[RMDB]
RNA sequence: GGGAACGACUCGAGUAGAGUCGAAAACUCUUACUGUUCGCAGUAAGAGAAUGGGAUUCGAAUCCCUCCCUAACCGCGGGUAAGCCGCCCAAAAAUAAAAUAGAGAGGCGUGCUUCGGCACGCCUAAGAUACAGGGUUUAUUCGUAAACCCUGUAUCAAAAGAAACAACAACAACAAC
Reactivity to 2A3 in 0.01 (KOAc 150mM, MgCl2 10mM, bicine 150mM(pH8.5), 24C), signal-to-noise 3, nucleotides 027 to 126: c000u000c000u000u010a000c000u000g060u070u060c260g000c130a000g000u010a000a000g000a010g000a010a030u010g010g000g020a020u140u180c110g080a130a130u030c030c000c000u010c000c010c000u000a060a040c050c050g000c100g010g030g040u100a140a100g250c010c020g060c000c020c030a090a180a000a030a010u220a080a090a030a060u240a060g150a010g020a000g070g010c000g020u000g010c000u060u060c110g030g000c000a000c000g000c000c000u000a020a000
Reactivity to DMS in 0.01 (KOAc 150mM, MgCl2 10mM, bicine 150mM(pH8.5), 24C), signal-to-noise 3, nucleotides 027 to 126: c000u000c000u000u000a000c000u000g020u000u000c200g050c010a000g010u000a000a010g000a010g000a050a040u000g000g000g000a040u000u010c300g020a110a200u000c000c000c010u000c010c000c000u010a120a120c130c240g000c070g000g020g010u030a110a160g000c070c020g000c000c210c070a000a060a040a120a090u000a040a060a090a120u000a120g010a170g000a040g000g030c000g020u000g000c000u000u010c150g000g000c000a000c000g010c000c000u000a020a030
Annotation:
An RNA of 177 nucleotides, treated with 2A3 and DMS and read out base by base. Reactivities are rounded to 0.1 and cut off at 0 and 3. The RNA was probed in 150 mM KOAc, 10 mM MgCl2 and 150 mM bicine (pH 8.5) at 24 C.